[RMDB]
RNA sequence: GGGAACGACUCGAGUAGAGUCGAAAACUGGGAGUUAGAGGAGACCUUAGGGGAGACCGAAGCGAGGAGGAAAGCAAAGAAAGCAACGGGGCUAGCCGGUGGGUGUUCCUCCCCCCGAGAGGGGAAGUGAGGCCAACCUUCGGGUUGGCCAAAAGAAACAACAACAACAAC
Reactivity to 2A3 in 0.01 (KOAc 150mM, MgCl2 10mM, bicine 150mM(pH8.5), 24C), signal-to-noise 2, nucleotides 027 to 129: c110u020g010g010g020a010g030u200u040a000g000a050g070g040a000g000a040c000c000u010u080a010g000g000g030g000a000g020a000c000c060g100a000a000g000c010g060a000g030g000a000g020g000a050a000a000g030c040a000a000a040g110a020a090a000g120c040a000a170c080g040g000g000g000c020u030a000g010c000c000g050g000u030g000g080g000u050g050u110u140c000c000u000c000c000c000c000c000c000g040a050g000a020g000g080g000g000a100a000g050u120g070a060
Reactivity to DMS in 0.01 (KOAc 150mM, MgCl2 10mM, bicine 150mM(pH8.5), 24C), signal-to-noise 2, nucleotides 027 to 129: c030u020g020g000g020a090g000u030u030a040g010a130g000g030a040g110a010c060c000u030u060a110g010g000g000g000a060g040a030c090c030g000a000a070g080c160g000a070g030g000a050g030g000a010a020a040g020c130a020a200a100g050a000a040a010g010c120a060a100c080g040g000g000g080c120u000a050g000c060c010g000g010u000g000g000g010u000g040u100u010c050c000u040c060c040c050c050c030c060g070a090g000a160g040g000g000g080a030a070g050u040g000a090
Chemical mapping of a 170-nucleotide RNA with 2A3 and DMS. The data come from the RNA Mapping Database (RMDB), library 15KLIB. Conditions: 150 mM KOAc, 10 mM MgCl2 and 150 mM bicine (pH 8.5), 24 C. DMS adducts were read by reverse transcription with MarathonRT. In probing experiments dimethyl sulfate is read out at A N1 and C N3, which are open when not base-paired. Reactivities are given for positions 27 through 129.